The record gives the reactivity of an RNA of 177 nucleotides to 2A3. The RNA was probed in 150 mM KOAc, 10 mM MgCl2 and 150 mM bicine (pH 8.5) at 24 C. The 2A3 profile rests on 1,478 reads. Reactivities are given for positions 27 through 126. The data come from the RNA Mapping Database (RMDB), library OK1LIB.
RNA sequence: GGGAACGACUCGAGUAGAGUCGAAAACUCAGGCCGCGAACCAAGAACAGAGUCUGUGCCGGGCGCGUGCGACGGUGGCGCGCGGCUCGGGGGGGCCGGGCGUGGAGGGUGGGCACGGGCCCUCCCGGACUAUGCGAGGUUUCGACCUCGCAUAGUCAAAAGAAACAACAACAACAAC
Reactivity to 2A3 in 0.01 (KOAc 150mM, MgCl2 10mM, bicine 150mM(pH8.5), 24C), signal-to-noise 3, nucleotides 027 to 126: c040u030c010a010g030g020c010c000g040c040g020a070a050c020c020a040a070g100a170a010c030a110g060a030g210u080c050u070g080u080g040c000c020g050g050g010c070g030c020g050u070g010c010g060a040c070g080g030u090g030g010c040g000c000g000c010g050g020c030u020c030g000g000g000g000g000g000g000c050c000g010g010g010c100g030u080g010g220a230g080g070g090u300g050g010g000c020a050c000g020g010g030c000c010c000u020c000c000c030g000